[RMDB]
RNA sequence: GGGAACGACUCGAGUAGAGUCGAAAAGAUAUGGAGUCGCUAGAGUGCGAAGAACUGACAUCACAGCUGGUGUCGGAAACGACACCAGUCACAGUGUCAGGGAGCACGAUUGGCGACUCCUAAGUCACUCUUUUAUUGAGUUCGCUCAAUAAAAGAGAAAAGAAACAACAACAACAAC
Reactivity to 2A3 in 0.01 (KOAc 150mM, MgCl2 10mM, bicine 150mM(pH8.5), 24C), signal-to-noise 3, nucleotides 027 to 126: g020a000u050a020u130g000g020a000g000u010c000g000c020u030a040g030a060g280u000g010c030g300a300a010g000a050a010c000u010g010a010c010a010u160c070a060c080a130g010c010u020g000g000u010g000u000c020g000g020a050a060a000c010g000a000c000a010c010c000a000g010u010c000a010c010a030g010u010g000u000c010a000g050g000g010a010g010c010a000c040g080a160u090u270g020g000c010g010a000c000u000c000c000u000a010a000g000u010c000a040
Reactivity to DMS in 0.01 (KOAc 150mM, MgCl2 10mM, bicine 150mM(pH8.5), 24C), signal-to-noise 5, nucleotides 027 to 126: g000a040u000a290u010g010g000a030g040u000c000g040c000u000a040g010a300g010u000g020c000g020a090a190g010a210a220c000u000g000a010c000a010u010c090a230c300a300g010c020u000g010g010u000g000u000c000g010g010a010a050a080c010g010a010c000a000c000c000a010g000u010c070a120c300a260g010u000g000u010c000a010g000g010g000a060g020c000a010c000g000a300u010u000g000g000c010g000a010c000u000c000c010u000a000a060g010u010c020a200
This 177-nucleotide RNA was probed chemically with 2A3 and DMS. For 2A3 the reverse transcriptase was SuperScript II with manganese. For DMS, 4,835 sequencing reads were counted. The 2A3 profile rests on 9,321 reads. Values cover nucleotides 27 to 126. Values are in units of 0.01, from 0 to 300, in steps of 10. 2A3 is a SHAPE reagent: it acylates the 2'-hydroxyl of flexible nucleotides of all four kinds. The RNA was probed in 150 mM KOAc, 10 mM MgCl2 and 150 mM bicine (pH 8.5) at 24 C.